The record gives the reactivity of an RNA of 177 nucleotides to 2A3 and DMS. It was measured as part of the RMDB libraries RFM100 and RFMREP. The reactions ran in a buffer of 150 mM KOAc, 10 mM MgCl2 and 150 mM bicine (pH 8.5), at 24 C.
[RMDB]
RNA sequence: GGGAACGACUCGAGUAGAGUCGAAAAGUCGUGAUCGCUCCCGUCGAUAGCGUGUCCUCUGUGAGUUCACAGUCGGCAAGGUCAUCGCCCUGACGGGUGAUUGACCUGGUUGAUGAUUAGUCCCGCAAAUGUAGGCGAGGUUCGCCUCGCCUACAUUAAAAGAAACAACAACAACAAC
Reactivity to 2A3 in 0.01 (KOAc 150mM, MgCl2 10mM, bicine 150mM(pH8.5), 24C), signal-to-noise 3, nucleotides 027 to 126: g060u030c010g020u040g030a090u040c000g020c040u020c000c020c010g010u010c040g010a050u080a090g070c040g020u050g020u020c030c000u000c080u070g110u030g090a100g040u110u110c000a010c020a030g020u020c010g010g000c030a030a000g000g000u020c000a020u000c000g010c000c000c010u110g150a050c150g000g000g000u000g010a030u000u110g000a000c020c000u000g010g010u000u030g010a060u010g000a010u010u080a050g080u040c000c000c020g030c090a050
Reactivity to DMS in 0.01 (KOAc 150mM, MgCl2 10mM, bicine 150mM(pH8.5), 24C), signal-to-noise 3, nucleotides 027 to 126: g010u000c060g030u020g000a090u000c030g020c020u000c050c050c030g010u010c030g030a070u020a080g040c090g020u030g010u010c020c000u020c020u030g020u020g010a110g000u000u010c050a070c040a150g030u010c070g000g010c020a080a020g010g010u000c010a010u010c010g010c000c000c000u010g060a150c280g020g010g020u000g010a010u000u020g010a020c000c010u000g000g030u000u010g000a030u000g010a070u020u010a070g000u010c010c000c010g030c220a070